[RMDB]
RNA sequence: GGGAACGACUCGAGUAGAGUCGAAAACACGAAGGUUGGCUAAUCCUGGUCGGACAUCAGGAGGUUAGUGCACUGGCAUAAGCCACCUUGGCGCUAAUAGAUACUAAUCGUAGCAUAGCUGAAUAAACCAUUUAUGGACCUUCGGGUCCAUAAAUGGAAAAGAAACAACAACAACAAC
Reactivity to 2A3 in 0.01 (KOAc 150mM, MgCl2 10mM, bicine 150mM(pH8.5), 24C), signal-to-noise 3, nucleotides 027 to 126: c070a030c050g070a020a030g060g010u160u100g070g040c030u040a030a070u010c000c000u010g050g000u010c060g030g140a030c030a100u020c020a000g040g000a020g040g000u070u070a030g030u050g030c030a030c220u110g150g000c030a050u070a250a000g000c020c000a030c010c020u000u030g090g020c010g000c010u010a020a010u070a210g050a050u100a090c050u130a060a150u050c030g000u020a000g020c040a060u020a050g000c020u020g060a080a060u190a180a070a010
Reactivity to DMS in 0.01 (KOAc 150mM, MgCl2 10mM, bicine 150mM(pH8.5), 24C), signal-to-noise 2, nucleotides 027 to 126: c050a070c270g000a140a080g000g000u030u020g000g010c030u020a090a210u020c040c010u000g020g020u010c180g050g010a300c110a020u000c020a030g020g000a090g010g020u020u000a110g010u030g030c030a200c240u010g010g010c030a040u040a080a100g020c000c030a020c100c050u000u060g000g050c010g020c080u000a000a030u020a080g030a050u000a100c100u000a030a030u000c150g000u000a020g020c000a130u000a060g000c040u030g000a040a080u070a040a080a020